[RMDB]
RNA sequence: GGGAACGACUCGAGUAGAGUCGAAAAGAUAUGGAGUGGUCAAGGGAGGAGUUCGGAAACGAAUACUCCGAGGAUCUUGACACUCCUAAGUCAAAGUCUUGUAUCGGGUUCGCCCGAUACAAGACAACUCCUCUUAUUGGUUCGCCAAUAAGAGGAGAAAAGAAACAACAACAACAAC
Reactivity to DMS in 0.01 (KOAc 150mM, MgCl2 10mM, bicine 150mM(pH8.5), 24C), signal-to-noise 4, nucleotides 027 to 126: g020a040u000a300u010g000g010a010g030u000g000g010u000c000a010a000g000g010g000a020g000g010a030g000u000u000c010g000g010a100a090a200c000g010a030a090u000a060c010u000c010c000g010a030g010g000a030u010c000u000u000g000a030c010a020c010u000c000c000u000a000a040g000u010c040a100a140a160g010u000c000u000u000g000u000a000u000c010g000g010g020u010u010c270g000c000c010c000g000a000u000a000c010a000a000g000a000c010a050a090
Reactivity to 2A3 in 0.01 (KOAc 150mM, MgCl2 10mM, bicine 150mM(pH8.5), 24C), signal-to-noise 3, nucleotides 027 to 126: g010a000u060a040u220g000g010a020g010u170g050g280u110c010a010a010g010g000g000a000g010g000a010g000u010u000c010g020g040a070a050a040c020g010a030a030u120a300c000u000c000c020g000a160g000g000a010u000c000u000u000g000a000c000a000c010u000c000c010u020a090a010g030u000c050a150a060a060g000u000c000u000u000g010u010a000u010c000g000g000g070u060u090c300g090c030c000c000g000a000u000a000c000a000a000g000a000c000a000a000

Conditions: 150 mM KOAc, 10 mM MgCl2 and 150 mM bicine (pH 8.5), 24 C.
The record gives the reactivity of an RNA of 177 nucleotides to DMS and 2A3.
The 2A3 profile rests on 12,713 reads.
Source: RMDB library TTRDEL, as collected in RNAgym.
For 2A3 the reverse transcriptase was SuperScript II with manganese.